[RMDB]
RNA sequence: GGGAACGACUCGAGUAGAGUCGAAAAGAUAUGGACAAGCUACCCACCAGCUCACGAUGAACUACUCGGGGAGUAUCGGAAACGAUAUGAAAGACGAGCAUCGUGAGCUGAGGCUUGUCCUAAGUCACACACAGUAGUACUUCGGUACUACUGUGUGAAAAGAAACAACAACAACAAC
Reactivity to 2A3 in 0.01 (KOAc 150mM, MgCl2 10mM, bicine 150mM(pH8.5), 24C), signal-to-noise 3, nucleotides 027 to 126: g090a070u300a220u300g000g000a030c020a000a020g010c010u170a300c050c000c030a030c010c000a000g000c000u030c010a000c010g000a030u040g040a100a080c090u240a040c010u300c020g020g000g040g060a200g030u000a000u000c000g000g000a070a120a050c010g000a000u020a010u080g250a300a040a060g300a110c000g000a000g030c010a000u030c000g010u010g000a000g000c000u000g000a000g000g000c000u000u000g010u000c000c000u010a000a000g020u070c060a020
Reactivity to DMS in 0.01 (KOAc 150mM, MgCl2 10mM, bicine 150mM(pH8.5), 24C), signal-to-noise 3, nucleotides 027 to 126: g030a130u020a280u010g010g000a000c000a040a000g010c010u000a250c020c010c060a300c140c010a000g010c020u000c000a050c000g010a010u000g010a120a050c070u030a180c000u010c000g030g010g000g000a300g020u000a000u000c000g000g000a090a040a290c000g010a000u000a000u010g000a150a220a200g030a070c010g000a040g000c000a030u000c010g000u000g020a000g000c020u010g000a010g000g000c000u010u010g000u000c000c030u000a020a050g050u000c110a190